Structure probing data (DMS and 2A3) for a 207-nucleotide construct. The data come from the RNA Mapping Database (RMDB), library OK3TST. For 2A3, 6,486 sequencing reads were counted. Conditions: 150 mM KOAc, 10 mM MgCl2 and 150 mM bicine (pH 8.5), 24 C.
RNA sequence: GGGAACGACUCGAGUAGAGUCGAAAACAUCAGUAAUAUCACGCACCGUCGUGUGAACGUACACUGAUCCGUUUACCUCAAUACGGCGGCUCGAAUAUGACCCGAUGAUAUGGUCAUCAUCAGCACACGAGAUCUGUAUCUCAUCACUUAAUGACUCCAUACCUCUGGCAUUCGUGCCAGAGGUAUGAAAAGAAACAACAACAACAAC
Reactivity to DMS in 0.01 (KOAc 150mM, MgCl2 10mM, bicine 150mM(pH8.5), 24C), signal-to-noise 2, nucleotides 027 to 156: c020a090u000c010a120g090u000a140a130u000a090u000c040a090c010g020c080a210c050c140g000u000c080g060u000g050u010g010a070a090c060g030u000a140c130a200c070u000g020a100u010c120c060g030u000u010u000a070c010c110u000c040a130a090u000a030c050g030g000c030g000g010c000u010c050g000a070a040u000a030u000g020a080c070c010c000g000a050u000g040a140u000a090u010g000g000u030c050a060u000c070a060u000c000a160g020c020a100c060a120c050g000a060g000a020u010c070u010g010u000a140u000c030u000c010a110u000c050a070c040u010u000a000a050u020g000a030c050u000c080
Reactivity to 2A3 in 0.01 (KOAc 150mM, MgCl2 10mM, bicine 150mM(pH8.5), 24C), signal-to-noise 9, nucleotides 027 to 156: c030a030u080c020a000g040u090a070a080u050a030u160c080a020c060g020c020a110c040c060g100u170c040g010u020g000u020g080a040a020c040g030u080a020c050a010c090u080g050a140u080c060c030g010u010u040u070a110c030c030u120c150a060a090u060a060c010g010g000c000g000g000c020u010c030g050a050a040u070a020u050g040a060c020c040c100g030a060u100g020a020u070a080u230g030g010u020c020a020u010c000a000u020c030a000g090c080a040c020a030c170g020a020g020a090u030c070u220g080u120a150u010c010u010c020a090u100c020a070c080u110u200a110a060u190g060a050c020u030c070